An RNA of 177 nucleotides, treated with DMS and 2A3 and read out base by base. The 2A3 profile rests on 3,852 reads. Reactivities are given for positions 27 through 126. The RNA was probed in 150 mM KOAc, 10 mM MgCl2 and 150 mM bicine (pH 8.5) at 24 C.
RNA sequence: GGGAACGACUCGAGUAGAGUCGAAAACAACAAAACAAAACAUAGGGGAGUCAGGGUUCGGAACUCCUACCCGAACCUAGGGUAACACUGACUGUGGAGGGGAAAAGAAAGAAAACAAAACAAAACAGCAUAUGCAUUAUUUCGAUAAUGCAUAUGCAAAAGAAACAACAACAACAAC
Reactivity to DMS in 0.01 (KOAc 150mM, MgCl2 10mM, bicine 150mM(pH8.5), 24C), signal-to-noise 3, nucleotides 027 to 126: c100a140a130c230a150a050a090a110c150a050a050a080a010c080a090u030a130g100g040g000g010a080g020u020c050a040g000g000g000u000u000c030g000g000a000a040c010u000c000c010u000a040c180c000c000g000a060a000c000c000u020a220g000g020g000u000a040a100c170a140c170u000g000a040c050u050g030u020g000g000a160g000g000g000g040a080a140a060a080g050a050a060a110g000a090a020a050a070c170a040a050a030a050c160a050a050a090a080c300a050
Reactivity to 2A3 in 0.01 (KOAc 150mM, MgCl2 10mM, bicine 150mM(pH8.5), 24C), signal-to-noise 4, nucleotides 027 to 126: c070a010a020c040a020a140a010a020c080a010a100a010a000c040a120u290a090g020g010g030g030a070g060u090c070a030g000g000g000u000u000c000g000g020a040a060c050u070c000c030u010a040c000c000c010g000a010a000c010c000u000a000g020g000g010u020a030a010c070a040c110u160g140a020c020u050g050u060g000g070a230g030g000g020g100a020a080a000a030g200a010a100a000g160a010a080a020a000c140a000a070a020a000c080a020a070a010a000c100a020